[RMDB]
RNA sequence: GGGAACGACUCGAGUAGAGUCGAAAAUUUUCGGCUGGAGAUGACAGCGCGGUUUUUGAGGACGUCUUUUGUCCGUGCGGUACCGCCCUCCUUGGUCGGCUCCGCCUACUCGGCGGUCGGCAGUGGAUUCAUCGUGCAGGUUCGCCUGCACGAUGAAAAAAGAAACAACAACAACAAC
Reactivity to DMS in 0.01 (KOAc 150mM, MgCl2 10mM, bicine 150mM(pH8.5), 24C), signal-to-noise 2, nucleotides 027 to 126: u000u020u000u010c000g030g030c010u010g020g000a060g020a070u000g010a090c110a060g000c130g050c030g020g020u000u000u030u020u010g010a160g000g020a040c010g010u020c110u000u010u010u080g000u000c000c030g020u000g030c100g010g020u000a060c030c000g030c020c040c060u000c050c040u010u040g000g010u010c000g000g000c080u000c050c000g010c010c000u020a100c080u010c080g000g070c110g010g020u010c030g000g000c060a050g000u020g020g000a100
Reactivity to 2A3 in 0.01 (KOAc 150mM, MgCl2 10mM, bicine 150mM(pH8.5), 24C), signal-to-noise 2, nucleotides 027 to 126: u080u030u000u030c000g030g000c010u060g000g050a090g010a120u040g000a050c020a030g000c090g000c090g100g000u000u010u030u160u300g120a150g000g000a030c040g130u100c010u060u100u040u150g010u000c000c000g000u050g040c040g000g020u020a020c020c030g030c000c000c000u000c000c070u030u090g030g010u020c000g010g020c050u040c000c010g050c000c000u040a060c070u020c060g000g050c010g000g050u000c000g000g010c020a020g040u020g080g090a030